[RMDB]
RNA sequence: GGGAACGACUCGAGUAGAGUCGAAAAGAUAUGGAACCAAACAUAGACCCACCGAGGAUCUCGGAAACGAGGGAGGUGCUAUGCACUGGUUCCUAAGUCAAAAUCUCUAAUCUUCGGAUUAGAGAAACAACGAUAUUUUGUUCGCAAAAUAUCGUUGAAAAGAAACAACAACAACAAC
Reactivity to DMS in 0.01 (KOAc 150mM, MgCl2 10mM, bicine 150mM(pH8.5), 24C), signal-to-noise 3, nucleotides 027 to 126: g010a040u000a300u010g000g030a010a020c000c010a040a160a220c000a000u000a000g010a160c210c290c060a060c010c020g000a030g000g000a010u000c010u000c000g000g000a070a060a170c010g000a030g000g000g020a040g020g010u000g000c010u000a000u000g030c070a090c220u000g010g000u000u000c000c010u000a030a070g000u000c040a080a050a110a090u000c000u000c000u000a000a010u000c000u000u010c220g010g000a010u000u010a000g000a000g000a030a060a150
Reactivity to 2A3 in 0.01 (KOAc 150mM, MgCl2 10mM, bicine 150mM(pH8.5), 24C), signal-to-noise 2, nucleotides 027 to 126: g010a020u080a040u180g000g000a010a010c000c000a060a060a000c010a010u030a020g110a160c100c080c040a000c020c020g020a250g060g030a030u000c010u000c020g050g000a120a070a040c010g000a010g000g000g010a000g010g000u020g030c000u010a000u020g000c040a040c210u000g000g010u000u000c000c010u000a090a010g040u000c020a050a040a150a300u000c000u020c000u010a010a000u020c020u010u090c300g110g010a010u010u000a010g000a000g000a020a000a000